[RMDB]
RNA sequence: GGGAACGACUCGAGUAGAGUCGAAAAGAUAUGGAUAUCAAAGAACGAUAAGCUGCGGUCGGAAACGACCGGCAGCUUUUGACGUUCAUGAUAUCCUAAGUCAAAUCAGCGGGUUCGCCCGCUGAAACGUAAAGAGUGUGUUCGCACACUCUUUACGAAAAGAAACAACAACAACAAC
Reactivity to DMS in 0.01 (KOAc 150mM, MgCl2 10mM, bicine 150mM(pH8.5), 24C), signal-to-noise 2, nucleotides 027 to 126: g000a010u000a190u010g020g000a010u000a010u000c000a030a230a170g000a000a000c010g030a130u010a010a010g020c000u000g020c000g010g000u000c000g010g010a050a050a080c000g020a010c000c010g010g020c010a000g010c000u000u000u010u000g010a120c080g020u000u010c000a230u000g010a010u000a000u000c000c000u000a000a070g020u010c020a150a120a150u010c010a000g000c000g000g020g020u000u020c250g010c010c000c000g030c000u000g000a010a060a120
Reactivity to 2A3 in 0.01 (KOAc 150mM, MgCl2 10mM, bicine 150mM(pH8.5), 24C), signal-to-noise 1, nucleotides 027 to 126: g000a010u030a020u100g000g000a000u020a000u000c030a000a130a300g010a020a000c040g030a120u090a300a010g030c000u010g050c020g000g000u000c000g000g020a130a030a010c030g000a000c020c050g040g000c010a010g060c020u020u000u020u020g010a000c010g000u000u000c000a010u000g000a000u000a000u000c000c010u000a050a010g000u000c020a000a040a300u010c000a000g000c010g000g080g040u090u120c270g120c000c000c040g000c000u000g020a010a030a000
Chemical mapping of a 177-nucleotide RNA with DMS and 2A3. Values are in units of 0.01, from 0 to 300, in steps of 10. The RNA was probed in 150 mM KOAc, 10 mM MgCl2 and 150 mM bicine (pH 8.5) at 24 C. The data come from the RNA Mapping Database (RMDB), library TTRDES.